RNA sequence: GGGAACGACUCGAGUAGAGUCGAAAACCAUUCCUUAUACCUUGAGUAUUGCUGAAUUCAGUAUAGCGUGCAUGCUCUUGGCUAUUCUCAUAGUGAUUGUCAAAUUUGGAGUUACUUAUUCGUCAAUAAAACACUACCACGUUCGCGUGGUAGUGAACAAAAUGGCGUACUUCGGUACGCCAUUUUGAAAAGAAACAACAACAACAAC
Reactivity to 2A3 in 0.01 (KOAc 150mM, MgCl2 10mM, bicine 150mM(pH8.5), 24C), signal-to-noise 3, nucleotides 027 to 156: c030c020a000u050u070c000c000u110u090a050u030a090c000c000u000u030g000a010g070u030a040u210u080g030c030u030g080a180a200u130u200c040a090g120u120a140u130a150g100c100g060u070g020c010a010u020g000c000u010c000u000u000g000g000c000u030a050u170u060c040u000c060a030u140a060g080u040g080a050u100u070g100u060c040a010a010a150u130u050u060g010g000a040g030u060u080a070c020u140u080a040u190u100c070g080u030c100a100a090u090a130a090a020a000c000a000c000u000a000c000c000a000c010g000u010u010c270g010c000g070u000g000g000u000a000g000u000g000a000a000
Reactivity to DMS in 0.01 (KOAc 150mM, MgCl2 10mM, bicine 150mM(pH8.5), 24C), signal-to-noise 2, nucleotides 027 to 156: c050c050a200u050u010c000c010u010u000a210u010a020c050c010u000u000g030a060g020u000a030u000u010g000c000u000g000a300a110u000u010c050a130g000u020a090u000a080g010c080g010u000g010c010a180u000g010c010u070c050u000u000g020g020c000u000a060u000u010c070u000c030a180u020a070g010u000g000a060u000u000g010u000c090a070a070a160u000u000u000g010g000a140g040u000u000a070c070u000u000a220u000u000c010g020u010c070a070a110u000a070a100a100a160c010a010c010u000a000c010c000a000c010g040u000u010c260g030c050g080u010g000g040u000a000g000u000g000a100a050